The record gives the reactivity of an RNA of 177 nucleotides to DMS. The reactions ran in a buffer of 150 mM KOAc, 10 mM MgCl2 and 150 mM bicine (pH 8.5), at 24 C. Values are in units of 0.01, from 0 to 300, in steps of 10. It was measured as part of the RMDB library OK2TST.
RNA sequence: GGGAACGACUCGAGUAGAGUCGAAAAGCACCCGGUAGGCAGGAGUGCAGCUGCUGAGACGCUUGCCCCAGGAGCCAGGCAUCAGGCCCAGACACUGUGACAGGUUCCCCAGUCUCUACCAUAGCAGCCUAAAGGUAGCGUUCGCGCUACCUUUAGGAAAAGAAACAACAACAACAAC
Reactivity to DMS in 0.01 (KOAc 150mM, MgCl2 10mM, bicine 150mM(pH8.5), 24C), signal-to-noise 2, nucleotides 027 to 126: g040c090a130c010c030c000g030g040u010a090g020g000c040a070g000g030a070g040u000g010c070a120g000c030u010g010c040u000g010a090g010a050c060g010c070u000u010g040c010c000c000c020a080g010g010a090g010c020c060a070g020g000c030a080u010c120a090g010g000c040c040c040a050g020a080c070a060c040u000g020u000g000a020c080a130g020g010u000u000c020c020c020c080a150g020u000c040u000c040u000a100c080c070a100u000a040g000c080a080g020